[RMDB]
Structure probing data (DMS) for a 177-nucleotide construct. The DMS profile rests on 753 reads. The RNA was probed in 150 mM KOAc, 10 mM MgCl2 and 150 mM bicine (pH 8.5) at 24 C.
RNA sequence: GGGAACGACUCGAGUAGAGUCGAAAAGAUAUGGACGUGAUUCUUAGCAAGGCGUUUGUGAGGCAGGUCGGAAACGACCUGAACUACCUCACAUACGCUGAUGACCUAAGAAUCACGUCCUAAGUCAGGAUCACAUUUUGUUCGCAAAAUGUGAUCCAAAAGAAACAACAACAACAAC
Reactivity to DMS in 0.01 (KOAc 150mM, MgCl2 10mM, bicine 150mM(pH8.5), 24C), signal-to-noise 1, nucleotides 027 to 126: g000a090u000a300u020g000g020a000c000g060u000g010a090u000u000c000u000u000a020g000c040a080a220g000g000c000g020u000u030u000g120u020g000a070g000g000c010a020g000g060u010c000g000g000a150a070a290c000g010a030c000c000u040g030a070a000c110u000a300c000c000u000c000a000c050a000u000a000c000g000c000u000g000a040u040g010a120c300c000u000a020a020g000a010a000u010c000a010c000g050u000c000c000u000a000a000g000u020c090a160